[RMDB]
Conditions: 150 mM KOAc, 10 mM MgCl2 and 150 mM bicine (pH 8.5), 24 C. The record gives the reactivity of an RNA of 177 nucleotides to DMS and 2A3. Source: RMDB library OK1LIB, as collected in RNAgym. DMS adducts were read by reverse transcription with MarathonRT. For 2A3, 3,670 sequencing reads were counted.

RNA sequence: GGGAACGACUCGAGUAGAGUCGAAAACUGUACCGGUGCAUUGUUAACAGUGGUGCCGUUGGUGGAGUUCAGGUCUGCGAGCAAUGCGACCUGCCCGUCCCACCGGAUCUCCAAGUGACGGCGUGACCCUAGCUGUGAUUUUCGAAUCACAGCUAGGAAAAGAAACAACAACAACAAC
Reactivity to DMS in 0.01 (KOAc 150mM, MgCl2 10mM, bicine 150mM(pH8.5), 24C), signal-to-noise 3, nucleotides 027 to 126: c060u010g020u010a100c060c010g000g030u010g050c140a110u000u000g010u000u050a130a090c150a120g000u010g000g000u010g020c000c030g020u000u000g000g010u000g000g000a100g000u020u020c000a000g020g010u000c020u030g060c020g000a150g040c300a110a140u040g010c000g000a000c000c020u010g000c150c010c020g000u010c090c040c000a090c020c000g010g000a080u040c060u040c050c060a030a110g000u010g000a080c010g000g020c030g020u000g000a170c030
Reactivity to 2A3 in 0.01 (KOAc 150mM, MgCl2 10mM, bicine 150mM(pH8.5), 24C), signal-to-noise 6, nucleotides 027 to 126: c020u030g040u100a030c010c020g000g000u040g050c040a080u090u100g090u110u200a180a070c050a090g080u060g030g040u060g020c000c000g010u030u040g060g050u050g010g020a060g000u060u070c000a010g020g000u060c110u300g040c010g080a130g130c140a150a060u300g010c010g000a000c000c000u010g010c000c000c000g040u050c010c000c000a020c000c000g000g020a060u040c030u010c040c020a100a110g180u090g090a020c000g000g030c040g030u080g080a070c000